Annotation:
Chemical mapping of a 207-nucleotide RNA with 2A3. The reactions ran in a buffer of 150 mM KOAc, 10 mM MgCl2 and 150 mM bicine (pH 8.5), at 24 C. Values cover nucleotides 27 to 156.
RNA sequence: GGGAACGACUCGAGUAGAGUCGAAAAAGUGCCAACAGAUGGGAAGUGGAUCUGGGGGUCUUGCCACAUCCAGUUCAGGGUCACUUUCUCUGUAGUGAGGUCCUUGGCUCCAUCGAGCAUGAAAAGAGAAAUACAAAUGAGACUGACAAAGAGGAAACGAAUCUCUGUCAUUCGUGACAGAGAUUCGAAAAGAAACAACAACAACAAC
Reactivity to 2A3 in 0.01 (KOAc 150mM, MgCl2 10mM, bicine 150mM(pH8.5), 24C), signal-to-noise 1, nucleotides 027 to 156: a000g070u030g020c020c000a010a000c000a120g060a070u080g050g050g000a040a040g030u020g040g020a110u050c040u080g010g050g000g030g000u070c030u060u070g060c040c000a050c010a050u000c030c000a060g010u100u130c030a000g010g000g040u030c010a000c000u000u100u150c030u000c020u060g030u100a150g040u010g060a070g010g000u020c020c000u010u010g000g000c030u020c020c010a020u160c120g020a010g050c100a050u100g040a030a010a010a010g120a010g040a000a020a000u250a060c050a020a130a040u100g000a020g000a010c020u080g010a020c110a010a060a010g100a050g010g110a100a060a000